Chemical mapping of a 207-nucleotide RNA with DMS and 2A3. The reactions ran in a buffer of 150 mM KOAc, 10 mM MgCl2 and 150 mM bicine (pH 8.5), at 24 C. For DMS the reverse transcriptase was MarathonRT. Values cover nucleotides 27 to 156. For 2A3, 747 sequencing reads were counted. 2A3 adducts were read by reverse transcription with SuperScript II with manganese. Source: RMDB library M2RFPK, as collected in RNAgym.
RNA sequence: GGGAACGACUCGAGUAGAGUCGAAAAUCCGUGAAACGCGAAAAUCGGACGGUGGCUGCACGUCGCAUCGCAAAACCGCGGCAAGUGGAGUUAGCGAGAGGAGGCUGGGUUUUGGCUUCCUUAAGCAUUGGGAUCCGCCCCUUCGGGGGCGGAUCAAGACAUAAACUAAGUUCGCUUAGUUUAUGUCAAAAGAAACAACAACAACAAC
Reactivity to DMS in 0.01 (KOAc 150mM, MgCl2 10mM, bicine 150mM(pH8.5), 24C), signal-to-noise 2, nucleotides 027 to 156: u000c020c020g000u040g000a060a080a100c040g040c020g010a090a060a240a150u000c060g010g030a080c000g020g040u030g010g030c000u000g000c040a100c010g010u000c040g080c000a040u000c060g000c020a030a040a100a150c050c050g020c000g010g030c110a040a120g020u000g000g000a150g000u000u010a150g000c000g010a300g000a030g000g010a050g000g030c010u010g050g060g040u020u000u000u000g020g000c010u010u000c010c010u000u010a000a300g010c040a170u010u000g010g000g010a020u000c000c030g000c030c000c000c000u010u000c290g040g010g020g010g000c000g000g000a000u000c010a000a060
Reactivity to 2A3 in 0.01 (KOAc 150mM, MgCl2 10mM, bicine 150mM(pH8.5), 24C), signal-to-noise 1, nucleotides 027 to 156: u000c000c010g010u030g060a090a070a010c060g000c020g070a050a000a020a180u100c040g040g010a040c010g070g040u100g030g020c020u020g030c040a010c000g040u060c070g010c020a050u070c020g040c040a000a130a000a000c030c060g000c000g060g000c070a100a080g000u020g070g020a080g000u130u130a020g040c000g010a020g000a000g020g000a010g010g000c020u070g250g170g000u030u110u140u300g010g000c000u000u010c010c020u020u030a010a010g010c020a020u010u100g020g050g000a000u030c000c020g000c010c010c000c010u010u040c140g030g030g000g000g000c020g000g010a000u000c000a000a000